[RMDB]
RNA sequence: GGGAACGACUCGAGUAGAGUCGAAAACUCACUAACUUCGGUUAGUGAGAAAUAAAUUCAGCGGUUUAAAUUUCGAGGGCAUAACCGCUGAUGCCGUCGAAAAAAGCAUUCCCUUCGGGGAAUGCAACUCUCUGCAUAUGUUCGCAUAUGCAGAGAGAAAAGAAACAACAACAACAAC
Reactivity to 2A3 in 0.01 (KOAc 150mM, MgCl2 10mM, bicine 150mM(pH8.5), 24C), signal-to-noise 2, nucleotides 027 to 126: c000u010c010a000c000u010a030a000c020u030u030c130g080g000u000u000a000g000u000g000a020g000a000a000a000u010a000a020a020u080u040c000a010g000c000g030g130u030u060u160a080a160a150u220u300u210c140g040a140g020g140g000c020a010u030a090a030c000c000g000c010u010g000a000u000g010c020c000g130u150c050g090a020a030a000a030a010a140g000c000a000u000u000c010c000c000u000u020c210g040g000g010g010a000a010u000g000c010a000a010
Reactivity to DMS in 0.01 (KOAc 150mM, MgCl2 10mM, bicine 150mM(pH8.5), 24C), signal-to-noise 2, nucleotides 027 to 126: c000u010c010a000c000u000a010a000c000u000u020c170g030g000u010u000a000g000u000g000a010g000a020a040a060u000a020a100a060u000u000c010a000g010c000g020g000u000u000u000a070a150a160u000u000u000c130g020a080g010g000g020c100a080u010a030a040c020c000g010c000u000g000a010u000g000c010c010g000u000c130g030a000a040a050a110a100a090g000c000a020u000u000c000c000c000u000u000c190g020g000g000g000a000a000u000g000c000a020a010
An RNA of 177 nucleotides, treated with 2A3 and DMS and read out base by base. For 2A3 the reverse transcriptase was SuperScript II with manganese. Source: RMDB library M2PK50, as collected in RNAgym.